The record gives the reactivity of an RNA of 207 nucleotides to DMS and 2A3. DMS adducts were read by reverse transcription with MarathonRT. The data come from the RNA Mapping Database (RMDB), library M2RFPK. The reactions ran in a buffer of 150 mM KOAc, 10 mM MgCl2 and 150 mM bicine (pH 8.5), at 24 C.
RNA sequence: GGGAACGACUCGAGUAGAGUCGAAAAACAAGAUGCCCAGGUAGCCCAGACCUUCAAGGCUACGGUGCGUUGCGACGCACGGUCUGAUUCUUCACAACGACGUUCACCGCGUCUUCUUCCAUCCCCCUCCAGCGCACGAAGUUCGCUUCGUGCGCAACUGUAUCGUUAGGUUCGCCUAACGAUACAGAAAAGAAACAACAACAACAAC
Reactivity to DMS in 0.01 (KOAc 150mM, MgCl2 10mM, bicine 150mM(pH8.5), 24C), signal-to-noise 1, nucleotides 027 to 156: a130c110a120a070g000a110u010g040c050c040c020a100g020g000u000a000g020c000c030c160a150g010a090c060c050u030u000c070a060a190g000g020c040u000a030c000g000g040u000g000c000g000u000u020g030c140g070a150c060g000c040a030c040g000g040u000c040u020g000a210u010u000c060u000u000c130a120c060a060a150c030g040a080c000g060u010u000c050a100c140c060g000c050g000u030c030u000u000c010u000u010c060c030a050u000c030c030c000c020c020u000c050c000a120g030c000g020c000a030c030g000a090a010g020u010u000c240g010c020u010u000c030g030u070g060c030g020c030a010a000
Reactivity to 2A3 in 0.01 (KOAc 150mM, MgCl2 10mM, bicine 150mM(pH8.5), 24C), signal-to-noise 2, nucleotides 027 to 156: a000c070a040a030g130a150u180g030c010c000c010a020g030g040u000a000g000c020c090c150a030g010a010c000c000u020u030c030a020a000g000g000c020u000a000c020g000g000u020g020c000g000u030u100g050c170g140a020c010g000c000a010c020g000g000u000c010u020g020a070u110u080c080u110u150c130a070c050a280a090c100g070a000c020g070u160u220c100a040c060c030g000c000g030u000c000u080u020c020u110u040c020c080a150u070c020c000c000c010c000u000c020c010a010g000c000g020c000a000c000g000a000a000g020u020u030c060g030c070u000u000c000g000u000g000c000g000c020a000a000